This 207-nucleotide RNA was probed chemically with 2A3. It was measured as part of the RMDB library OK3TST.
RNA sequence: GGGAACGACUCGAGUAGAGUCGAAAACUCAGAUGAUAAUGACACUUAAUGAGCACUAUGUGCCGGACACUAUUUUUAGUGUUUUACAUCUUUUAUCUAAUUCAAUCUUUAUAAUAACCGUUAUGAUACUUUGAGGUAGAUGUGAUUAUUAUCCUCACGCACUAGGAGUAUUCGUACUCCUAGUGCGAAAAGAAACAACAACAACAAC
Reactivity to 2A3 in 0.01 (KOAc 150mM, MgCl2 10mM, bicine 150mM(pH8.5), 24C), signal-to-noise 4, nucleotides 027 to 156: c020u020c010a010g000a010u020g020a060u010a050a020u060g040a000c010a000c050u080u110a110a040u220g080a120g120c010a010c040u140a150u300g010u020g000c000c040g030g060a040c030a030c060u120a140u170u130u010u050u120a010g000u000g000u000u030u020u010a010c000a030u040c000u040u130u100u110a080u000c060u130a140a080u240u030c010a030a110u030c050u060u230u120a200u040a190a080u100a140a130c060c000g030u010u110a080u110g040a030u020a150c070u060u050u090g020a010g010g010u050a060g030a070u100g060u070g130a060u020u050a010u020u050a030u150c000c020u010c030a020
Record summary: For 2A3, 1,392 sequencing reads were counted.